[RMDB]
The record gives the reactivity of an RNA of 207 nucleotides to 2A3 and DMS.
Conditions: 150 mM KOAc, 10 mM MgCl2 and 150 mM bicine (pH 8.5), 24 C.
The 2A3 profile rests on 2,134 reads.
For 2A3 the reverse transcriptase was SuperScript II with manganese.
Source: RMDB library OK3TST, as collected in RNAgym.
RNA sequence: GGGAACGACUCGAGUAGAGUCGAAAAGGAGCUCUCUAGGAGCUGUGGGGCCGUGCAGGUCCAUACAGGGCAGAUCCUCAGCCAGCCUGUCAGGGCCGCGGUGCAGCACGCCCGAGGCCUUCAGUCCUAGCGCCGUGGUGAGCCCAGGGUGGGGCUAGCAUAGUACGAUAUUCGUAUCGUACUAUGCAAAAGAAACAACAACAACAAC
Reactivity to 2A3 in 0.01 (KOAc 150mM, MgCl2 10mM, bicine 150mM(pH8.5), 24C), signal-to-noise 3, nucleotides 027 to 156: g090g000a040g020c010u010c010u060c120u180a100g110g050a040g030c020u010g060u070g000g020g000g000c060c010g030u090g130c210a040g010g020u000c010c000a010u140a040c040a040g000g010g000c040a040g030a300u010c010c000u010c010a010g000c020c010a000g000c000c000u010g070u080c120a100g000g000g000c020c010g000c000g020g020u190g040c020a060g130c030a040c160g010c050c010c000g010a020g030g000c010c000u000u000c000a020g020u030c010c050u090a110g010c060g000c100c000g050u030g020g040u010g040a010g000c010c020c050a020g030g000g020u210g000g040g000g030c050u060a020
Reactivity to DMS in 0.01 (KOAc 150mM, MgCl2 10mM, bicine 150mM(pH8.5), 24C), signal-to-noise 1, nucleotides 027 to 156: g000g000a030g030c000u000c000u020c080u010a190g020g010a030g040c010u000g010u000g020g000g020g020c020c040g020u060g000c160a250g030g030u000c000c010a070u000a020c090a130g020g000g010c030a050g010a080u000c040c050u000c030a140g000c010c030a170g030c050c040u140g030u000c120a180g000g050g020c000c020g000c020g020g000u010g040c050a150g000c280a230c030g000c040c000c020g000a000g070g000c000c000u010u020c020a070g000u000c020c040u000a070g040c060g000c010c040g040u010g000g030u010g020a300g020c000c020c010a070g010g010g020u000g000g020g010g000c050u000a210